[RMDB]
RNA sequence: GGGAACGACUCGAGUAGAGUCGAAAAUGAGGGGAGGGCGCCGCGGAUCACUGGCGAGCAGAAACAGGAGCUCGUCUCCUUCCUUUCUUGCCUCCACAUCCGAUCGUCGCUUCUCUCUUCGCGACCUGAAAAAGAAACUACCCGGUGGAUACAACUCGUUUAACUUUCAGUUCGCUGAAAGUUAAACAAAAGAAACAACAACAACAAC
Reactivity to 2A3 in 0.01 (KOAc 150mM, MgCl2 10mM, bicine 150mM(pH8.5), 24C), signal-to-noise 2, nucleotides 027 to 156: u140g000a010g000g000g000g010a000g010g010g000c000g030c000c010g080c000g010g000a000u000c000a010c070u000g020g010c030g070a090g000c000a010g010a020a050a120c300a220g000g010a010g010c060u110c300g200u120c100u000c000c000u010u000c000c000u010u000u010c000u050u210g020c000c010u000c010c000a010c020a000u000c000c000g090a300u090c000g010u010c010g000c000u300u120c000u020c000u000c000u000u000c000g010c020g020a040c000c020u010g040a100a060a040a000a020g070a050a090a010c020u050a030c010c060c040g120g000u060g040g040a090u150a230c080a080a160c200u100c120